[RMDB]
RNA sequence: GGGAACGACUCGAGUAGAGUCGAAAAGAGCGUUACCUAGGUACUUCGAGGAGUACUCGGACUGGGACCGGUUCGGUACUCGGUUACCGUCCCACUCAAUGAGCUCGGCAAGGAUCAUCCGGCGCUGCUCCGCAGUGGCCAGAGACAGCCACUCCUCCUCUGAUACUGUCUUCGGACAGUAUCAGAGAAAAGAAACAACAACAACAAC
Reactivity to DMS in 0.01 (KOAc 150mM, MgCl2 10mM, bicine 150mM(pH8.5), 24C), signal-to-noise 1, nucleotides 027 to 156: g030a060g050c020g020u010u000a090c060c030u030a080g030g010u000a070c090u000u000c050g010a150g040g010a070g000u010a010c020u090c080g000g000a050c030u000g020g000g000a060c070c030g070g010u010u000c020g040g010u010a040c030u010c020g030g300u010u000a060c000c000g020u060c020c000c020a080c080u000c020a080a150u000g000a020g000c000u010c080g000g000c010a140a170g040g000a200u000c020a170u000c010c030g000g000c010g010c000u000g000c010u000c130c210g000c010a020g020u020g020g030c000c010a010g000a110g000a050c020a150g000c000c010a200c030u000c020c010u000c020

Background: The data come from the RNA Mapping Database (RMDB), library OK3TST. Chemical mapping of a 207-nucleotide RNA with DMS. For DMS the reverse transcriptase was MarathonRT. Reactivities are given for positions 27 through 156.